[RMDB]
RNA sequence: GGGAACGACUCGAGUAGAGUCGAAAAGACAGAAACCAGAUCUGAUUUGCCCCAAAGCCAGUGCUUUUUUUCUCUCUGUCUCUCUAGCACUGCCAGAACAGCAUUUGCUUUCAAGUUGGCCACCAUUUUGUGGUAGGGGCACCAACUAGACAGUAAAACCGAUGAGGAUAUUCGUAUCCUCAUCGGUAAAAGAAACAACAACAACAAC
Reactivity to 2A3 in 0.01 (KOAc 150mM, MgCl2 10mM, bicine 150mM(pH8.5), 24C), signal-to-noise 2, nucleotides 027 to 156: g070a000c010a020g030a050a100a020c110c060a050g020a210u090c020u060g060a200u080u080u170g050c000c000c000c000a030a000a000g060c030c020a010g010u010g020c040u070u060u030u080u000u140u030c080u030c010u000c020u040g050u040c010u000c000u000c010u060a140g030c050a020c060u030g010c020c030a020g020a080a040c020a060g000c010a030u000u060u060g020c010u030u070u110c050a100a060g020u050u050g060g000c020c000a010c040c020a130u190u170u230u300g030u030g010g030u020a110g020g000g000g000c000a020c000c000a110a010c000u030a020g090a060c000a020g090u170a030a130a100
The record gives the reactivity of an RNA of 207 nucleotides to 2A3. The data come from the RNA Mapping Database (RMDB), library OK3TST. Conditions: 150 mM KOAc, 10 mM MgCl2 and 150 mM bicine (pH 8.5), 24 C. 2A3 adducts were read by reverse transcription with SuperScript II with manganese.